[RMDB]
RNA sequence: GGGAACGACUCGAGUAGAGUCGAAAACAACGGUGCUUGCGGUGACGGCAAGCACGAUCGUCACCACGAAUUUGAACAGGAAACGAACCGUUUCCAUCGCGCUGCCGAUGUCGGCGCGAAAGCCGAAACUAUGCCGCACUUUCGAGUGCGGCAUAGUAAAAGAAACAACAACAACAAC
Reactivity to 2A3 in 0.01 (KOAc 150mM, MgCl2 10mM, bicine 150mM(pH8.5), 24C), signal-to-noise 2, nucleotides 027 to 126: c060a000a070c060g090g000u020g070c020u130u080g030c070g120g040u150g090a000c010g020g000c000a030a040g160c000a030c000g000a020u000c000g010u000c000a030c080c000a030c070g090a100a050u240u170u220g090a140a050c000a070g000g060a010a010a010c010g110a020a100c110c180g060u010u010u000c010c010a000u030c050g010c000g000c000u070g020c000c000g020a030u300g160u100c000g000g000c050g000c000g040a050a000a000g050c070c010g010a050a050
Reactivity to DMS in 0.01 (KOAc 150mM, MgCl2 10mM, bicine 150mM(pH8.5), 24C), signal-to-noise 1, nucleotides 027 to 126: c200a140a290c170g000g000u000g050c000u000u090g000c040g000g040u000g000a020c000g090g020c000a090a110g000c220a080c040g000a060u000c020g010u050c020a040c060c000a120c000g000a020a160u000u000u020g000a100a100c150a200g000g000a000a000a000c030g000a150a060c220c020g000u000u000u000c000c000a030u000c000g000c000g000c010u000g000c060c050g010a050u020g000u040c000g040g000c000g000c000g050a000a030a160g000c020c000g000a110a040